[RMDB]
RNA sequence: GGGAACGACUCGAGUAGAGUCGAAAAUUUAUCAUGUUAGGGAAGUGCCCUUCCAGUUAGUAAUACAGAUUAUCAGGAUGCUCUUGUGUAAGAAGCUGUGAAAGAAGUGAGGGGUUAGUUUCACUACUUUCCUUUCCAGUGGUGCCUGGUGGCGUUACUAUGCGUGGUAUUUCGAUACCACGCAUAGAAAAGAAACAACAACAACAAC
Reactivity to 2A3 in 0.01 (KOAc 150mM, MgCl2 10mM, bicine 150mM(pH8.5), 24C), signal-to-noise 3, nucleotides 027 to 156: u120u110u050a170u090c080a010u060g030u060u050a030g010g010g020a060a130g050u080g010c000c000c000u020u030c020c000a000g050u060u130a020g020u110a070a060u110a130c040a050g100a060u060u080a040u220c020a030g070g030a040u120g050c010u000c040u120u080g030u020g020u090a030a050g010a040a020g030c040u000g000u050g070a080a030a030g060a060a070g050u130g080a020g000g010g000g020u050u060a020g070u030u110u120c090a020c070u080a040c020u070u020u010c010c050u010u010u020c010c030a010g040u010g030g010u000g060c010c030u060g030g000u050g000g000c020g040u010u060a050
Reactivity to DMS in 0.01 (KOAc 150mM, MgCl2 10mM, bicine 150mM(pH8.5), 24C), signal-to-noise 2, nucleotides 027 to 156: u020u020u010a080u010c060a130u000g010u000u000a080g000g000g010a050a080g030u010g000c000c020c010u010u000c010c020a160g000u010u000a120g000u000a070a060u010a190c050a080g000a090u000u010a100u010c030a130g000g030a120u010g000c020u000c030u000u000g040u010g010u000a050a130g000a090a110g020c020u040g030u010g000a010a070a110g000a150a120g020u000g020a080g030g030g030g010u020u000a100g000u000u000u010c040a140c060u000a060c010u000u010u010c000c010u000u000u020c040c050a120g020u010g000g030u000g000c070c020u020g010g010u000g030g020c000g000u000u000a080

The data come from the RNA Mapping Database (RMDB), library OK3TST. The record gives the reactivity of an RNA of 207 nucleotides to 2A3 and DMS. DMS adducts were read by reverse transcription with MarathonRT. For 2A3 the reverse transcriptase was SuperScript II with manganese. The 2A3 profile rests on 1,176 reads. The DMS profile rests on 4,110 reads. The RNA was probed in 150 mM KOAc, 10 mM MgCl2 and 150 mM bicine (pH 8.5) at 24 C.